[RMDB]
RNA sequence: GGGAACGACUCGAGUAGAGUCGAAAAAUACAUUCCUGUGCCGGCAAUACAGUGUGUAUGGAGGUCUCAAUGGCACGGAAGUGCCAGCAAACCGGCGUAGAUAUUAGCAGACGUAUGGGCGUAAGACAAAAGAGAAUGAUGUUCGCAUCAUUCUCAAAAUUACCGUGUAGUUCGCUACACGGUAAUUAAAAGAAACAACAACAACAAC
Reactivity to DMS in 0.01 (KOAc 150mM, MgCl2 10mM, bicine 150mM(pH8.5), 24C), signal-to-noise 2, nucleotides 027 to 156: a070u000a090c040a150u000u000c280c010u000g010u010g050c010c020g010g020c050a060a070u000a080c020a100g010u020g030u010g030u000a010u000g010g010a150g010g000u000c010u000c050a100a110u000g000g030c000a010c000g040g020a110a140g040u000g010c000c010a050g030c050a040a120a080c020c000g030g020c010g050u010a030g010a130u000a080u010u000a110g030c080a080g020a050c070g010u000a040u000g010g020g020c010g010u000a070a080g000a130c100a060a070a100a160g000a040g040a050a060u010g000a030u010g030u000u000c300g050c010a030u020c000a010u000u000c000u000c000a020a020
Reactivity to 2A3 in 0.01 (KOAc 150mM, MgCl2 10mM, bicine 150mM(pH8.5), 24C), signal-to-noise 2, nucleotides 027 to 156: a010u090a010c000a020u020u040c000c010u060g020u050g010c000c000g030g000c010a020a040u050a080c070a100g150u040g020u020g000u160a020u090g060g010a030g010g100u020c020u000c050a080a100u040g050g000c000a000c030g010g050a110a070g000u000g000c000c000a050g000c040a010a020a040c030c010g010g000c000g010u070a020g030a060u070a080u150u190a020g050c040a000g010a090c080g060u080a060u160g020g000g050c020g010u030a060a080g070a050c060a040a110a020a020g020a000g000a000a000u010g000a000u010g030u040u150c210g000c080a000u020c000a000u000u010c000u000c000a000a000
Chemical mapping of a 207-nucleotide RNA with DMS and 2A3. DMS adducts were read by reverse transcription with MarathonRT. For 2A3 the reverse transcriptase was SuperScript II with manganese. Conditions: 150 mM KOAc, 10 mM MgCl2 and 150 mM bicine (pH 8.5), 24 C. For DMS, 4,495 sequencing reads were counted. The data come from the RNA Mapping Database (RMDB), library M2RFPK. For 2A3, 1,351 sequencing reads were counted.